[RMDB]
RNA sequence: GGGAACGACUCGAGUAGAGUCGAAAAAAAGAUAUGGACCAAUGAACUACGACGUGGCCAUAGGAGGUCCUUCGGAAACGAAGGACUCCCCACCCUAUGGAAUCGUCGCAUUGGUCCUAAGUCAAAAGAUUAACUGUUGGUUCGCCAACAGUUAAUCAAAAGAAACAACAACAACAAC
Reactivity to 2A3 in 0.01 (KOAc 150mM, MgCl2 10mM, bicine 150mM(pH8.5), 24C), signal-to-noise 2, nucleotides 027 to 126: a010a000a020g130a030u130a040u150g000g010a000c000c000a000a010u020g010a140a120c140u170a070c300g000a000c020g050u110g220g150c000c000a000u000a000g000g010a010g030g000u010c000c030u010u010c000g050g010a100a040a030c010g020a010a000g000g000a000c010u020c000c000c000c000a030c000c010c000u020a010u020g000g020a020a090u120c020g020u000c020g000c010a000u000u010g000g000u020c000c000u020a010a010g030u010c010a050a010a040a170
Reactivity to DMS in 0.01 (KOAc 150mM, MgCl2 10mM, bicine 150mM(pH8.5), 24C), signal-to-noise 3, nucleotides 027 to 126: a070a060a100g020a030u000a300u010g020g000a020c010c000a020a010u000g000a210a100c210u010a300c050g010a000c020g020u020g010g010c000c010a010u000a000g010g000a130g040g000u000c000c000u000u000c000g000g000a120a080a120c010g040a000a000g010g000a030c000u000c050c030c000c010a300c070c000c000u000a010u010g000g000a150a070u000c000g000u000c010g010c000a000u010u000g000g000u000c000c000u000a000a040g000u000c040a060a090a090a150